This 207-nucleotide RNA was probed chemically with 2A3.

RNA sequence: GGGAACGACUCGAGUAGAGUCGAAAAAAUGACUUAUGUGGUAUCUGGUUUACGACAAACCAUUUCAUUAUCAGGUCAUAUUGGAGUAGAAGUGAAAGUCUUAACUGGUUUCUUACUGGCAUUUAUGGUAUUAGCACUACUCAUUUAUCGUCCUAAACAUGCCACGGUAGUUCGCUACCGUGGCAUGAAAAGAAACAACAACAACAAC
Reactivity to 2A3 in 0.01 (KOAc 150mM, MgCl2 10mM, bicine 150mM(pH8.5), 24C), signal-to-noise 1, nucleotides 027 to 156: a000a000u000g010a000c000u040u020a070u060g020u060g100g020u060a000u020c000u000g050g020u020u000u000a260c290g060a010c060a000a000a000c050c000a040u020u080u050c020a020u060u230a110u150c090a060g060g000u000c020a010u040a030u120u140g130g000a010g000u090a070g030a230a000g020u040g070a010a010a010g020u050c050u050u080a140a110c100u000g000g000u090u090u110c090u070u160a030c010u030g050g000c030a030u000u050u150a020u080g000g110u100a080u090u110a110g000c000a000c000u050a000c000u000c010a050u040u120u000a060u130c050g020u030c020c000u020a020a110a000
The reactions ran in a buffer of 150 mM KOAc, 10 mM MgCl2 and 150 mM bicine (pH 8.5), at 24 C. Values cover nucleotides 27 to 156. For 2A3, 350 sequencing reads were counted. 2A3 adducts were read by reverse transcription with SuperScript II with manganese.